[RMDB]
RNA sequence: GGGAACGACUCGAGUAGAGUCGAAAAAAAAGAUAUGGAUCAACUCCCCACCUCUAUGACUGCUUGGAUUUACGGAUCGGAAACGAUCCGUUGUCAGCAGUAUAGAGAGGUUGAUCCUAAGUCAAAACUUGAAUAAUAUGUUCGCAUAUUAUUCAAGAAAAGAAACAACAACAACAAC
Reactivity to 2A3 in 0.01 (KOAc 150mM, MgCl2 10mM, bicine 150mM(pH8.5), 24C), signal-to-noise 3, nucleotides 027 to 126: a020a100a000a080g110a110u230a100u250g010g000a020u000c000a020a010c000u170c070c090c010c000a010c010c000u000c000u030a060u090g300a140c000u010g080c000u060u260g230g020a110u300u190u090a000c020g020g010a010u010c020g000g060a070a130a080c020g010a000u000c010c000g000u010u010g010u010c000a010g020c020a000g000u000a000u000a000g000a000g020a010g000g000u000u000g000a000u030c000c000u030a190a020g120u120c100a030a010a190a200
Reactivity to DMS in 0.01 (KOAc 150mM, MgCl2 10mM, bicine 150mM(pH8.5), 24C), signal-to-noise 3, nucleotides 027 to 126: a070a100a130a100g010a110u010a180u000g000g010a010u000c000a010a000c000u000c250c020c000c100a300c080c010u000c000u000a010u000g010a010c010u000g000c000u000u010g010g010a020u010u000u000a010c000g040g010a000u000c000g010g000a100a060a180c000g020a010u000c000c010g020u000u000g010u000c000a050g010c000a010g000u000a010u000a000g000a000g000a060g010g000u000u000g000a020u000c000c000u000a020a100g010u010c090a080a080a110a160